[RMDB]
RNA sequence: GGGAACGACUCGAGUAGAGUCGAAAACAGUACGUCGCAGCUUCGAUCCCGUAUCGGGUGCCUCUCAAGCCUGCCGCGCCUGGAUUACUGCGGUUCAGUUCUUGUCCGCCGGGCAAGCCAGUCCCGCUCCCUUUGGCAAUUUCGAUUGCCAAAGGGAAAAAGAAACAACAACAACAAC
Reactivity to DMS in 0.01 (KOAc 150mM, MgCl2 10mM, bicine 150mM(pH8.5), 24C), signal-to-noise 2, nucleotides 027 to 126: c050a080g010u020a070c060g020u030c080g040c040a050g000c040u000u020c100g030a100u000c050c010c030g060u010a040u010c030g000g010g020u000g000c010c040u010c050u020c120a060a170g000c110c060u000g020c050c030g010c070g020c140c000u000g020g000a110u030u020a050c070u010g020c070g000g000u020u000c040a080g010u030u040c060u020u000g010u000c000c030g010c030c070g020g020g020c070a050a040g010c300c070a060g000u020c020c010c000g020c090
Reactivity to 2A3 in 0.01 (KOAc 150mM, MgCl2 10mM, bicine 150mM(pH8.5), 24C), signal-to-noise 3, nucleotides 027 to 126: c070a020g080u120a010c010g000u020c030g010c020a010g030c020u070u070c020g070a080u060c000c020c030g050u060a170u090c030g010g000g040u090g030c000c010u060c000u010c060a050a030g000c000c020u040g010c020c030g000c010g010c000c000u040g040g010a010u040u100a050c020u050g020c030g080g000u020u070c010a030g010u060u060c020u040u060g020u010c010c040g020c060c090g100g000g060c040a050a010g040c000c010a040g020u050c020c010c000g000c010